[RMDB]
Conditions: 150 mM KOAc, 10 mM MgCl2 and 150 mM bicine (pH 8.5), 24 C. This 170-nucleotide RNA was probed chemically with DMS and 2A3. For DMS, 86,924 sequencing reads were counted.
RNA sequence: GGGAACGACUCGAGUAGAGUCGAAAAUCAGGUGCUAAGCGAAUAUGUUCUAUGUGGUGGUGGUUACUACGUCAAACCUGGAGGUACCAGUAGCGGAGAUGCCACCACUGCAUAUGCCAAUAGUGUCAACGAUUCACGUUCGCGUGAAUCAAAAGAAACAACAACAACAAC
Reactivity to DMS in 0.01 (KOAc 150mM, MgCl2 10mM, bicine 150mM(pH8.5), 24C), signal-to-noise 9, nucleotides 027 to 129: u050c030a080g000g000u010g020c040u010a060a100g000c020g020a080a060u030a060u040g000u030u020c090u030a020u000g040u020g010g040u000g010g020u010g010g000u000u040a160c030u010a040c020g000u000c090a040a120a150c300c010u000g020g000a170g030g060u030a120c000c000a000g000u000a260g000c000g000g000a020g020a300u020g000c020c000a000c010c000a000c000u000g000c000a020u000a010u030g040c160c080a060a080u020a040g020u000g010u000c050a080a090c180
Reactivity to 2A3 in 0.01 (KOAc 150mM, MgCl2 10mM, bicine 150mM(pH8.5), 24C), signal-to-noise 9, nucleotides 027 to 129: u080c010a020g030g010u030g040c020u050a050a040g020c030g070a110a050u140a100u210g080u090u060c030u030a010u020g010u010g010g000u010g000g000u000g000g010u060u070a130c010u010a010c010g090u130c090a090a110a130c020c010u010g010g030a130g120g120u170a180c000c000a000g000u010a020g010c010g010g000a010g010a040u060g000c000c000a000c000c000a000c000u000g000c000a000u010a010u020g020c010c010a070a060u060a040g050u040g030u040c030a040a030c120

Overview
The data come from the RNA Mapping Database (RMDB), library 15KLIB.